RNA sequence: GGGAACGACUCGAGUAGAGUCGAAAAGAAAGAAAGAAAGAAAUCUGACAGAAUGACGGAUUCGAUCGUUGUGGUCGGCGGGCCACCACGUCAUUCCUUCGCACUGUCUCCGGGCAGACCGCCCUAAAAAAGCGGAUCUACUUCGGUAGAUCCGCAACCAGUGUUGUUUGUUCGCAAACAACACUGGAAAAGAAACAACAACAACAAC
Reactivity to 2A3 in 0.01 (KOAc 150mM, MgCl2 10mM, bicine 150mM(pH8.5), 24C), signal-to-noise 2, nucleotides 027 to 156: g050a030a080a000g030a010a080a020g070a030a090a000g050a040a110a030u130c110u110g000a000c000a000g060a120a110u110g010a000c020g000g030a030u050u160c110g040a090u220c040g020u000u000g000u000g020g020u010c050g050g130c080g050g000g000c010c000a000c010c030a000c000g000u000c000a020u010u030c000c000u020u010c040g030c030a050c020u020g000u000c020u000c040c020g020g000g010c010a030g040a120c030c060g010c010c000c000u090a070a070a010a000a010a000g000c000g000g000a000u000c000u000a000c000u010u050c140g030g000u000a000g010a000u000c000c000g000c000a000a000
Structure probing data (2A3) for a 207-nucleotide construct. The 2A3 profile rests on 1,760 reads. The data come from the RNA Mapping Database (RMDB), library M2RFPK.